[RMDB]
RNA sequence: GGGAACGACUCGAGUAGAGUCGAAAAGGGGUCCUACGCUUCCCGAAGAACGCUAAGACAUGCUCUGAAGCCUCCACGGAGCAACAGCUUAGCGGGAGGGAAGGUAGGACGGAGGCACCCAAAACCCGAUGGUUGUCUUCGGACAACCAUCGGGUAAGUCAAGUAGUAGAUUCGUCUACUACUUGACAAAAGAAACAACAACAACAAC
Reactivity to 2A3 in 0.01 (KOAc 150mM, MgCl2 10mM, bicine 150mM(pH8.5), 24C), signal-to-noise 2, nucleotides 027 to 156: g120g000g060g000u000c070c000u000a010c110g170c160u010u000c000c000c000g010a090a010g000a010a020c010g000c000u000a010a000g000a050c090a190u210g010c000u000c010u010g040a110a040g000c000c000u000c000c010a000c010g010g000a000g070c030a050a050c070a030g210c010u020u000a000g000c020g000g010g000a010g000g000g020a010a000g000g000u000a000g000g000a000c020g000g000a000g000g000c000a010c000c010c000a080a130a000a010c000c000c000g000a000u000g030g030u010u020g000u000c020u030u070c300g110g000a010c000a000a000c000c000a000u000c010g000g000g000u000a000a000